[RMDB]
Conditions: 150 mM KOAc, 10 mM MgCl2 and 150 mM bicine (pH 8.5), 24 C. Structure probing data (2A3 and DMS) for a 177-nucleotide construct.
RNA sequence: GGGAACGACUCGAGUAGAGUCGAAAACAAAACUGACCACCUAUGAGGUCAUACAUCGUCAUAGAAAAACAAAACAAAACUGACCAGAUAUGAGGUCAUACAUCGUCAUAGCAAACAAAACAACAAACAUAUGAGUGCUGUUCGCAGCACUCAUAUGAAAAGAAACAACAACAACAAC
Reactivity to 2A3 in 0.01 (KOAc 150mM, MgCl2 10mM, bicine 150mM(pH8.5), 24C), signal-to-noise 6, nucleotides 027 to 126: c020a000a080a020a070c050u060g010a020c000c000a020c000c010u020a020u040g010a000g020g020u030c040a030u180a090c060a090u120c080g090u000c010a020u020a030g120a100a070a030a000a030c090a010a100a040a020c040a020a120a030a070c070u020g000a010c000c010a010g030a120u170a110u260g070a070g010g000u000c000a000u050a010c040a070u070c040g150u060c030a060u090a040g060c060a020a080a080c060a040a150a040a020c080a020a020c040a060a100a010
Reactivity to DMS in 0.01 (KOAc 150mM, MgCl2 10mM, bicine 150mM(pH8.5), 24C), signal-to-noise 2, nucleotides 027 to 126: c000a000a100a020a030c280u010g000a000c000c050a180c160c050u000a000u000g010a100g000g000u000c040a060u020a120c300a030u030c080g020u000c050a080u030a040g010a070a070a070a030a040c150a060a100a160a010c180a050a040a130a090c230u000g020a000c020c020a060g000a150u000a030u050g000a110g010g050u010c030a020u130a050c060a070u000c060g000u000c030a020u000a130g000c120a030a040a000c150a100a130a040a010c100a000a070c250a000a080a060
For DMS, 2,003 sequencing reads were counted. DMS adducts were read by reverse transcription with MarathonRT. 2A3 adducts were read by reverse transcription with SuperScript II with manganese. Reactivities are given for positions 27 through 126.